An RNA of 177 nucleotides, treated with DMS and 2A3 and read out base by base. For 2A3 the reverse transcriptase was SuperScript II with manganese. The data come from the RNA Mapping Database (RMDB), library TTRDES. DMS adducts were read by reverse transcription with MarathonRT. For 2A3, 3,854 sequencing reads were counted.

[RMDB]
RNA sequence: GGGAACGACUCGAGUAGAGUCGAAAAGAUAUGGAUCGACCAGACAUGAGCGCUUCCUCGGAAACGAGGAAGGGCUCAACAGCUGGUUCGAUCCUAAGUCAAAGUCAUUUCCUUCGGGAAAUGACAAUCUACUCUUGACGUUCGCGUCAAGAGUAGAAAAAGAAACAACAACAACAAC
Reactivity to DMS in 0.01 (KOAc 150mM, MgCl2 10mM, bicine 150mM(pH8.5), 24C), signal-to-noise 2, nucleotides 027 to 126: g000a020u010a300u000g000g000a020u010c000g000a060c000c010a000g010a030c150a300u010g010a020g010c010g010c000u000u000c000c000u000c000g000g000a060a070a180c020g010a030g010g010a010a000g020g010g020c020u000c000a010a030c300a240g000c000u000g010g000u000u010c020g020a010u000c000c000u000a010a090g010u000c020a080a100a160g000u000c000a000u000u000u010c010c000u000u020c230g030g010g000a010a000a000u010g010a010c000a010a060
Reactivity to 2A3 in 0.01 (KOAc 150mM, MgCl2 10mM, bicine 150mM(pH8.5), 24C), signal-to-noise 2, nucleotides 027 to 126: g050a000u070a020u160g000g000a000u010c010g020a010c000c010a000g060a060c140a280u300g010a020g020c300g040c300u000u030c000c000u010c000g000g030a090a070a040c000g000a000g000g000a000a000g000g000g000c000u010c000a020a000c020a000g000c000u010g000g000u110u100c010g010a010u010c000c010u020a040a010g000u010c040a040a080a120g020u000c000a000u040u000u010c000c000u010u110c300g160g000g000a000a000a000u030g010a000c000a000a020